Chemical mapping of a 207-nucleotide RNA with 2A3 and DMS. For DMS the reverse transcriptase was MarathonRT. 2A3 is a SHAPE reagent: it acylates the 2'-hydroxyl of flexible nucleotides of all four kinds. For 2A3, 2,104 sequencing reads were counted. Conditions: 150 mM KOAc, 10 mM MgCl2 and 150 mM bicine (pH 8.5), 24 C.
[RMDB]
RNA sequence: GGGAACGACUCGAGUAGAGUCGAAAAUCACGCUCUGGUUCUUCCUCCACUCGCUCCACAGCAAAUAGUGCCUCACGCAGCCAGCGGACACUGUCAACUGACGCAGCACCCCAGCCAGGGCUGGCCACCCAGGCAUACAGCCUAGUGGGGCCAGAGGCCUGAACACACUAUUCGUAGUGUGUUCAGGAAAAGAAACAACAACAACAAC
Reactivity to 2A3 in 0.01 (KOAc 150mM, MgCl2 10mM, bicine 150mM(pH8.5), 24C), signal-to-noise 3, nucleotides 027 to 156: u060c010a020c100g020c010u030c010u030g030g010u090u060c030u080u020c010c010u020c000c030a040c030u050c040g020c000u020c010c020a050c000a040g040c020a050a090a050u110a090g060u070g020c030c010u060c010a130c050g030c010a010g060c040c010a020g020c040g020g030a020c030a010c080u050g030u080c010a080a050c080u090g030a040c040g020c040a030g010c030a070c010c000c010c010a000g020c000c010a030g000g020g020c000u000g000g000c000c000a120c040c000c010a000g000g000c000a030u160a140c090a050g010c000c010u030a030g030u170g100g000g000g000c010c000a000g010a000g000g030
Reactivity to DMS in 0.01 (KOAc 150mM, MgCl2 10mM, bicine 150mM(pH8.5), 24C), signal-to-noise 1, nucleotides 027 to 156: u010c020a100c080g040c020u000c060u010g000g000u030u000c100u010u030c050c020u000c050c060a060c000u000c010g000c010u020c000c040a130c050a040g000c080a100a150a070u010a090g040u000g040c000c030u020c030a090c040g000c020a090g010c060c040a080g020c050g000g000a070c020a110c010u010g020u010c020a050a080c030u000g020a130c050g030c000a070g000c040a120c000c010c020c000a130g010c020c020a090g020g010g040c000u010g010g010c020c010a060c020c010c000a060g000g070c000a190u000a070c170a260g000c010c030u000a050g000u010g010g010g020g000c000c010a040g000a080g010g010